Background
The record gives the reactivity of an RNA of 207 nucleotides to 2A3 and DMS. High 2A3 reactivity points to a flexible backbone, as in loops and unpaired stretches. For DMS, 4,456 sequencing reads were counted. The 2A3 profile rests on 8,403 reads.
RNA sequence: GGGAACGACUCGAGUAGAGUCGAAAAGUCGCCUUUCGAGGCGACCUCAAGCGUACUACUUCGGAUUGAUGACCCAGGCUACCCACCACUUCCCAAAUAGGAAGUGAGGCCUGGCAAGAUCCAGAAGUAUCGCGACCAAUGUAGGUUCGCCUACAAAUGUAAAGUCUUAUUUCGAUAAGACUUUACAAAAAGAAACAACAACAACAAC
Reactivity to 2A3 in 0.01 (KOAc 150mM, MgCl2 10mM, bicine 150mM(pH8.5), 24C), signal-to-noise 7, nucleotides 027 to 156: g000u010c000g000c010c000u080u050u150c300g130a030g010g000c020g000a010c000c000u090c070a100a040g000c000g040u090a100c060u000a010c000u020u010c000g010g010a010u010u040g050a100u120g040a140c020c010c000a000g000g000c010u050a110c080c070c040a020c010c000a000c020u010u000c000c010c040a190a300a130u200a120g000g000a000a000g000u000g000a010g000g000c000c000u000g000g000c010a040a040g000a000u000c000c040a110g020a000a000g000u010a030u300c010g000c010g010a000c000c030a070a140u120g000u010a010g020g020u050u090c220g100c070c000u010a020c000a010a110a010
Reactivity to DMS in 0.01 (KOAc 150mM, MgCl2 10mM, bicine 150mM(pH8.5), 24C), signal-to-noise 3, nucleotides 027 to 156: g020u010c000g010c000c010u000u000u010c170g020a050g000g020c000g000a010c010c020u000c050a120a180g010c010g000u000a130c090u000a020c020u010u000c000g040g000a040u020u030g010a140u000g000a110c300c000c010a030g010g000c010u000a010c020c020c010a300c090c000a040c010u000u000c000c000c010a070a140a230u000a070g000g010a050a020g010u000g000a100g000g000c010c010u000g010g000c000a050a040g000a050u000c000c010a070g000a030a050g010u000a040u000c020g010c000g010a100c040c010a070a090u010g030u000a020g000g010u010u000c300g030c040c010u010a030c030a050a110a190